Structure probing data (2A3) for a 207-nucleotide construct. The reactions ran in a buffer of 150 mM KOAc, 10 mM MgCl2 and 150 mM bicine (pH 8.5), at 24 C. 2A3 is a SHAPE reagent: it acylates the 2'-hydroxyl of flexible nucleotides of all four kinds.
[RMDB]
RNA sequence: GGGAACGACUCGAGUAGAGUCGAAAAUGAUGUUGGUAGGGCUCAAGGUAUAAACCCUGCACCCAUACAAAAUUUGGUUAAUAAUUCGCAGAAACCUCAUCUUUGGCUCAAUCCCACUACGAGUCAGGGCGGUGAUAUGGAACUUCCUUUUUUGUGGCCUGUACUUGAGGUUCGCCUCAAGUACAGGAAAAGAAACAACAACAACAAC
Reactivity to 2A3 in 0.01 (KOAc 150mM, MgCl2 10mM, bicine 150mM(pH8.5), 24C), signal-to-noise 1, nucleotides 027 to 156: u100g070a000u060g020u140u010g080g030u060a090g020g020g040c040u070c150a080a040g070g000u100a070u090a210a150a040c000c000c000u020g000c000a020c010c010c010a020u050a120c070a050a080a060a060u030u130u140g030g000u040u020a050a000u040a080a070u210u120c170g000c130a000g100a090a040a040c040c000u070c060a120u050c000u100u120u070g010g010c000u000c010a010a130u130c000c000c020a020c050u060a080c110g000a010g010u020c040a040g000g050g000c050g030g030u050g010a170u090a090u200g020g000a010a010c000u040u020c000c000u000u090u000u000u150u080g050u030g050g000